Record summary
This 207-nucleotide RNA was probed chemically with DMS and 2A3. As a SHAPE reagent, 2A3 marks flexible, mostly unpaired nucleotides at the ribose 2'-OH. The RNA was probed in 150 mM KOAc, 10 mM MgCl2 and 150 mM bicine (pH 8.5) at 24 C.

RNA sequence: GGGAACGACUCGAGUAGAGUCGAAAACUUGCAGUCGUCUUGGAUGGGAAAGCAUGCUCACUUCGUUCCUAAGCAUGCGAAAGGAUGGCUGUUGAAGGCAUGCGAAAGGAUGGGAUUCAUCGCUGGACGCGUACGGAAACCAUCCCAUGAACAUCCACGCAGCAAUAUAAUUCGUUAUAUUGCUGCGAAAAGAAACAACAACAACAAC
Reactivity to DMS in 0.01 (KOAc 150mM, MgCl2 10mM, bicine 150mM(pH8.5), 24C), signal-to-noise 3, nucleotides 027 to 156: c010u020u000g030c000a000g010u000c000g000u000c030u000u010g020g020a150u000g020g000g030a130a120a210g030c010a020u000g020c000u010c030a060c160u000u010c020g010u000u000c010c010u010a060a090g000c030a030u010g020c040g000a080a140a080g030g040a050u000g020g010c020u020g010u000u000g010a070a090g010g020c090a050u010g020c010g020a160a230a060g000g020a040u010g000g010g020a300u010u000c020a070u000c020g020c010u010g030g010a270c170g030c020g020u010a090c060g030g010a040a030a250c010c000a020u000c000c010c000a030u000g010a090a060c030a060u000c010c030a270
Reactivity to 2A3 in 0.01 (KOAc 150mM, MgCl2 10mM, bicine 150mM(pH8.5), 24C), signal-to-noise 6, nucleotides 027 to 156: c010u030u070g000c010a010g010u010c000g040u020c030u080u080g030g050a060u070g030g030g090a120a080a020g010c000a000u010g020c000u030c020a200c060u170u080c040g020u020u030c000c000u010a010a010g020c010a010u050g000c030g020a110a010a000g040g010a000u010g010g000c020u020g010u000u090g060a020a010g070g020c100a030u060g030c060g130a130a030a010g000g010a000u010g010g000g020a040u030u000c010a010u040c040g010c050u120g120g110a110c140g020c010g020u110a070c090g060g000a000a000a010c000c000a000u000c000c000c000a050u090g010a030a010c000a020u000c010c020a020